[RMDB]
The record gives the reactivity of an RNA of 177 nucleotides to DMS.
Conditions: 150 mM KOAc, 10 mM MgCl2 and 150 mM bicine (pH 8.5), 24 C.
The data come from the RNA Mapping Database (RMDB), library M2PK90.
RNA sequence: GGGAACGACUCGAGUAGAGUCGAAAAGUAAAGGCGGAGGAGGGUUUUGGCUUGCGCUCGGUCCGCCCGCGCGUGGUGUGGGCUGGAAUUCGUGUGUGGAGGAUGAUUAAUCCCGCGCGCCCAGGAAUUACUCCUGAGGAUUCGUCCUCAGGAGUAAAAAAGAAACAACAACAACAAC
Reactivity to DMS in 0.01 (KOAc 150mM, MgCl2 10mM, bicine 150mM(pH8.5), 24C), signal-to-noise 1, nucleotides 027 to 126: g000u000a050a090a090g010g000c020g000g000a100g000g020a130g010g030g010u000u000u000u010g020g040c050u000u020g020c030g000c020u010c000g040g010u000c030c040g010c020c000c040g030c080g000c060g040u010g050g020u000g030u000g010g000g000c010u000g020g010a060a090u000u010c030g020u000g020u000g010u000g030g030a060g000g010a100u000g010a090u000u000a140a090u010c010c000c010g010c040g020c050g000c030c020c010a110g000g020a100a150